This 207-nucleotide RNA was probed chemically with 2A3 and DMS. DMS adducts were read by reverse transcription with MarathonRT. Values cover nucleotides 27 to 156.

RNA sequence: GGGAACGACUCGAGUAGAGUCGAAAAUGAGACAAACACGCUUCACAAUGUGCGGCAAAGAAACAUUGUUUAUGCGAAGGCACUUCGCAAUGUGUGCUCAAACAUUGCUUAUUCAAACACGCUUCACAAAAGAAUCAGUGGUUCGCCACUGAUUCAACAUAACAUAAAGCUUCGGCUUUAUGUUAUGAAAAGAAACAACAACAACAAC
Reactivity to 2A3 in 0.01 (KOAc 150mM, MgCl2 10mM, bicine 150mM(pH8.5), 24C), signal-to-noise 9, nucleotides 027 to 156: u160g020a030g030a050c070a030a160a000c070a010c050g000c000u010u020c020a000c000a010a010u010g000u010g010c020g050g060c100a110a060a070g070a020a060a000c010a010u000u010g080u050u080u110a110u130g000c030g040a080a040g130g010c020a010c030u030u030c030g000c000a010a010u010g010u000g020u020g030c070u090c230a050a050a010c010a020u010u020g000c000u090u130a130u150u160c090a040a100a030c060a020c130g100c040u130u140c070a040c050a130a080a040a040g000a000a000u000c000a000g000u010g030g030u040u060c180g050c040c000a000c000u000g000a000u000u000c000a000a000
Reactivity to DMS in 0.01 (KOAc 150mM, MgCl2 10mM, bicine 150mM(pH8.5), 24C), signal-to-noise 3, nucleotides 027 to 156: u000g010a160g030a170c080a160a090a110c080a020c010g030c000u000u010c050a130c020a030a030u020g040u000g050c020g020g030c010a130a090a100g040a070a020a030c010a010u010u010g010u000u000u000a070u010g000c000g010a190a080g010g000c050a040c020u010u000c090g010c100a050a010u010g030u000g010u000g010c020u000c030a070a130a020c030a060u010u010g000c000u000u010a090u000u010c050a130a090a080c090a070c130g030c020u000u000c020a140c070a080a080a100a100g000a020a000u000c000a000g030u000g000g010u000u010c300g040c010c000a010c000u000g010a010u000u000c000a020a140
The reactions ran in a buffer of 150 mM KOAc, 10 mM MgCl2 and 150 mM bicine (pH 8.5), at 24 C.